An RNA of 177 nucleotides, treated with 2A3 and DMS and read out base by base. For 2A3, 5,392 sequencing reads were counted. The data come from the RNA Mapping Database (RMDB), library TTRDES.

[RMDB]
RNA sequence: GGGAACGACUCGAGUAGAGUCGAAAAGAUAUGGAGCAUUUGUGACAUGCUAAUGUAUCGGAAACGAUACGAUAGCAACAGCACACUGAUGCUCCUAAGUCAAAAUCGUACCCUUCGGGGUACGAAACUAUUCGUCACAGUUCGCUGUGACGAAUAGAAAAGAAACAACAACAACAAC
Reactivity to 2A3 in 0.01 (KOAc 150mM, MgCl2 10mM, bicine 150mM(pH8.5), 24C), signal-to-noise 1, nucleotides 027 to 126: g000a000u000a020u060g000g010a000g000c010a000u000u040u030g050u000g000a120c150a300u300g000c010u000a010a180u160g000u000a010u000c000g000g000a010a010a010c010g000a000u010a000c020g060a040u040a020g110c020a180a250c070a220g190c120a010c000a000c070u010g010a000u020g000c000u000c010c000u000a000a000g010u000c010a010a010a010a300u050c010g000u000a000c000c030c000u030u040c300g020g000g020g000u000a000c010g000a000a000a000
Reactivity to DMS in 0.01 (KOAc 150mM, MgCl2 10mM, bicine 150mM(pH8.5), 24C), signal-to-noise 2, nucleotides 027 to 126: g020a020u000a190u030g000g000a010g020c000a000u000u000u000g010u000g030a300c170a170u010g020c000u000a020a090u000g030u000a030u000c020g020g010a020a020a090c000g010a000u010a000c020g010a130u000a000g030c040a090a090c300a250g030c160a090c000a000c160u010g000a010u000g020c030u000c000c000u000a000a090g020u030c010a120a020a120a090u000c010g020u000a000c000c000c010u020u000c170g040g020g000g010u000a000c000g000a010a050a210